[RMDB]
RNA sequence: GGGAACGACUCGAGUAGAGUCGAAAAGCACUCCUUUUCGAAGGAGUGCCCAGGCGCGCGGCCUUUGUGCUGUCGCGUGUGCGCCGCGCGCGAUAUACGCGCAUCUGUGCAUAUUCGUAUGCACAAAAGAUCACUAUUCUUUCGAGAAUAGUGAUCUAAAAGAAACAACAACAACAAC
Reactivity to DMS in 0.01 (KOAc 150mM, MgCl2 10mM, bicine 150mM(pH8.5), 24C), signal-to-noise 7, nucleotides 027 to 126: g010c010a000c000u010c000c000u000u000u000u020c180g010a020a010g000g010a020g020u000g010c000c010c020a090g010g000c000g010c010g020c010g010g020c010c210u010u010u010g010u010g010c040u000g010u010c050g010c000g010u000g010u000g010c130g010c020c030g010c050g010c000g010c010g000a050u010a060u010a050c020g010c010g010c160a140u010c150u000g010u000g000c000a010u000a020u000u010c180g010u000a010u000g000c000a010c000a030a040a080
Reactivity to 2A3 in 0.01 (KOAc 150mM, MgCl2 10mM, bicine 150mM(pH8.5), 24C), signal-to-noise 7, nucleotides 027 to 126: g020c000a000c000u000c000c000u030u040u040u110c220g110a000a000g000g000a000g000u000g000c000c010c000a040g020g020c010g000c010g010c010g000g030c040c000u120u210u290g130u150g030c060u080g090u230c040g000c010g010u010g020u020g010c050g010c030c020g010c000g000c000g000c000g010a000u070a010u030a150c010g010c010g010c030a050u040c060u100g000u000g000c010a000u010a020u020u040c110g120u030a000u010g000c020a000c000a000a050a000

The data come from the RNA Mapping Database (RMDB), library M2PK50. An RNA of 177 nucleotides, treated with DMS and 2A3 and read out base by base. Reactivities are rounded to 0.1 and cut off at 0 and 3. Conditions: 150 mM KOAc, 10 mM MgCl2 and 150 mM bicine (pH 8.5), 24 C.